The record gives the reactivity of an RNA of 170 nucleotides to DMS and 2A3. In probing experiments dimethyl sulfate is read out at A N1 and C N3, which are open when not base-paired. The 2A3 profile rests on 14,577 reads. The RNA was probed in 150 mM KOAc, 10 mM MgCl2 and 150 mM bicine (pH 8.5) at 24 C. For 2A3 the reverse transcriptase was SuperScript II with manganese.

RNA sequence: GGGAACGACUCGAGUAGAGUCGAAAAAAUAAUUAUGUACCCUCAUAUGUUAAACCUGAUAGUGUGUCUACCAGCGAUUUAGGUAGUCUCAUUGAUUGUAAUGCGGCUUCAGUUAACCAAAUUGUCUACGGUUUGAUCUUCGGAUCAAACAAAAGAAACAACAACAACAAC
Reactivity to DMS in 0.01 (KOAc 150mM, MgCl2 10mM, bicine 150mM(pH8.5), 24C), signal-to-noise 5, nucleotides 027 to 129: a090a040u000a000a060u000u030a050u020g040u020a080c050c040c020u050c020a040u000a060u030g000u000u050a050a100a070c000c000u000g030a080u030a000g030u000g010u000g020u000c030u030a070c060c020a050g000c110g000a060u050u020u020a100g030g050u010a050g010u000c020u010c010a080u010u020g030a000u050u070g000u050a060a030u000g030c110g000g000c060u020u030c070a080g020u000u000a080a140c060c050a020a040a020u030u010g000u040c000u020a080c210g000
Reactivity to 2A3 in 0.01 (KOAc 150mM, MgCl2 10mM, bicine 150mM(pH8.5), 24C), signal-to-noise 7, nucleotides 027 to 129: a000a020u300a020a030u140u090a050u070g040u060a040c000c030c000u010c030a050u080a040u140g110u080u110a060a060a080c010c010u040g050a080u040a110g050u050g000u010g010u020c010u020a020c000c000a020g070c050g060a060u100u070u120a060g020g000u010a000g020u000c000u000c000a010u050u030g110a120u040u140g070u200a040a030u070g010c020g010g000c000u010u030c030a080g020u070u060a050a000c030c010a060a050a110u100u080g060u020c040u020a040c060g020